[RMDB]
RNA sequence: GGGAACGACUCGAGUAGAGUCGAAAAGGGUUUGGAUUACAUCAAUUGUAACAUGAGCAGAAGUAAACAGAACAAGAAGUACUGCGGUUAUUCAAGUUCAAAGUUCACACUAUCGCAAUAAAGGGAAUAUCAUCUGGAAGUUCGCUUCCAGAUGAUAAAAAGAAACAACAACAACAAC
Reactivity to 2A3 in 0.01 (KOAc 150mM, MgCl2 10mM, bicine 150mM(pH8.5), 24C), signal-to-noise 1, nucleotides 027 to 126: g100g000g000u080u110u180g030g050a070u010u110a000c010a030u030c050a070a250u130u070g030u020a010a080c030a110u100g000a030g000c060a040g000a110a000g000u130a050a070a060c020a060g030a030a010c040a000a030g020a030a000g020u000a020c000u040g030c000g030g000u050u030a020u060u030c050a010a000g020u000u030c060a090a090a000g000u040u030c060a030c000a000c060u090a120u210c000g000c000a010a070u100a160a080a000g040g000g000a030a130
Reactivity to DMS in 0.01 (KOAc 150mM, MgCl2 10mM, bicine 150mM(pH8.5), 24C), signal-to-noise 2, nucleotides 027 to 126: g000g020g030u000u000u000g000g000a180u000u010a020c020a030u000c120a080a090u020u000g010u010a060a050c090a100u000g000a070g020c040a060g000a040a030g010u000a050a020a040c050a060g000a030a020c000a040a270g000a100a040g000u000a030c020u000g010c130g040g010u000u000a120u000u010c020a030a300g000u000u010c020a090a090a090g010u000u000c040a060c090a060c100u010a090u020c060g010c030a060a060u000a010a070a050g000g000g000a050a080